Background
An RNA of 177 nucleotides, treated with 2A3 and DMS and read out base by base.

[RMDB]
RNA sequence: GGGAACGACUCGAGUAGAGUCGAAAAACUCGGGGGCAGUACCCGACGCCUCCACCAAAACUUUCUAAAUAACUUGCUCCUAAAGGUAAUUUGUACGUCGAUCCGGUACUCGAAUCCUCACGUAGAACAGGUGUCUAGCGUUCGCGUUAGAUACCUGAAAAGAAACAACAACAACAAC
Reactivity to 2A3 in 0.01 (KOAc 150mM, MgCl2 10mM, bicine 150mM(pH8.5), 24C), signal-to-noise 9, nucleotides 027 to 126: a000c050u070c060g000g000g000g000g010c010a020g020u040a070c000c010c000g020a030c040g010c000c000u080c000c010a040c030c020a020a080a070a090c050u090u150u050c060u180a110a120a120u170a070a100c030u040u080g020c010u030c040c030u090a100a050a040g040g010u040a070a140u050u080u140g070u050a040c040g030u010c030g030a040u010c030c020g030g020u030a050c010u010c030g040a040a060u040c000c010u040c010a070c060g060u080a030g030a140a020
Reactivity to DMS in 0.01 (KOAc 150mM, MgCl2 10mM, bicine 150mM(pH8.5), 24C), signal-to-noise 6, nucleotides 027 to 126: a080c070u010c140g020g000g010g000g040c040a090g020u020a130c020c000c010g000a130c130g010c010c010u000c010c030a140c150c100a050a040a110a100c120u020u000u010c030u020a040a070a090u020a070a060c090u000u010g000c030u000c010c030u010a050a070a090g000g000u030a060a080u030u010u000g020u010a030c080g010u010c040g010a080u010c050c000g000g010u000a040c040u040c040g010a070a070u010c000c010u010c040a080c070g010u030a060g020a060a170

It was measured as part of the RMDB library OK1LIB. Reactivities are rounded to 0.1 and cut off at 0 and 3. For 2A3 the reverse transcriptase was SuperScript II with manganese. For DMS, 15,291 sequencing reads were counted. The RNA was probed in 150 mM KOAc, 10 mM MgCl2 and 150 mM bicine (pH 8.5) at 24 C.